Structure probing data (2A3 and DMS) for a 177-nucleotide construct.
Conditions: 150 mM KOAc, 10 mM MgCl2 and 150 mM bicine (pH 8.5), 24 C.
It was measured as part of the RMDB libraries RFM100 and RFMREP.

[RMDB]
RNA sequence: GGGAACGACUCGAGUAGAGUCGAAAAUAAGCACCUCGUUAGGUGAGGCGGCUACACGAACAUAGGCCACUGACCCCGAACGUCGAGAGACGCCCCGGGUCAGGACAGCUCUUCCCGGCUUAAGGGUGAGUUGUUAAACAUUCGUGUUUAACAACUCAAAAGAAACAACAACAACAAC
Reactivity to 2A3 in 0.01 (KOAc 150mM, MgCl2 10mM, bicine 150mM(pH8.5), 24C), signal-to-noise 7, nucleotides 027 to 126: u160a030a020g020c010a010c000c000u010c040g150u120u300a130g020g130u170g070a020g000g050c100g020g000c020u080a020c080a010c100g120a150a000c020a120u170a070g080g000c020c020a030c030u010g000a010c000c000c000c040g040a060a040c010g010u000c010g010a010g000a000g000a100c000g030c020c030c020c000g010g000g000u000c000a000g000g030a000c030a010g010c000u010c010u060u040c010c000c000g040g000c030u080u120a060a050g080g030g020u060
Reactivity to DMS in 0.01 (KOAc 150mM, MgCl2 10mM, bicine 150mM(pH8.5), 24C), signal-to-noise 4, nucleotides 027 to 126: u020a110a080g000c010a180c010c010u000c070g030u070u010a090g030g030u040g000a040g000g020c040g020g000c000u000a010c190a100c120g020a050a070c110a130u030a090g000g030c030c040a280c020u000g000a020c020c010c030c130g000a160a200c000g000u000c000g010a240g000a240g020a020c020g000c020c070c210c300g020g010g010u000c010a010g000g000a040c080a080g000c020u000c090u000u000c000c010c040g000g020c080u010u000a050a110g020g010g020u000